RNA sequence: GGGAACGACUCGAGUAGAGUCGAAAAUCUCAAAGCUUCGGCUUUGAGACAGUAAGGGAAACCGAUUAUUCCGGUCGACUCCGGUGAAACAAAGUCAAAUAAGAACGUUAGGCUUCGGCCUAACGAAACACUCCUAUUCCUUCGGGAAUAGGAGUGUAAAAGAAACAACAACAACAAC
Reactivity to DMS in 0.01 (KOAc 150mM, MgCl2 10mM, bicine 150mM(pH8.5), 24C), signal-to-noise 2, nucleotides 027 to 126: u000c000u010c000a000a020a000g000c020u000u010c250g000g000c000u030u020u000g010a000g010a000c080a040g020u000a060a120g010g000g000a160a100a150c100c050g010a080u000u000a300u010u010c000c000g000g000u000c020g000a010c000u020c020c010g000g010u000g020a110a000a250c150a000a000a000g010u000c000a110a070a100u010a060a130g010a150a170c010g000u000u010a000g010g020c010u010u010c180g040g000c000c010u000a000a010c000g000a020a080
Reactivity to 2A3 in 0.01 (KOAc 150mM, MgCl2 10mM, bicine 150mM(pH8.5), 24C), signal-to-noise 2, nucleotides 027 to 126: u000c000u010c000a010a000a000g020c020u110u200c280g100g010c010u010u010u030g000a010g000a000c020a050g100u140a070a120g060g010g040a040a020a020c000c000g010a040u160u040a060u150u040c000c030g010g000u000c000g000a010c130u090c300c020g000g010u050g070a020a010a000c000a000a010a000g010u040c070a040a020a050u170a070a060g120a200a030c010g000u000u000a000g000g000c030u020u060c190g060g000c020c000u010a010a000c000g000a000a000
Structure probing data (DMS and 2A3) for a 177-nucleotide construct. For 2A3, 2,303 sequencing reads were counted.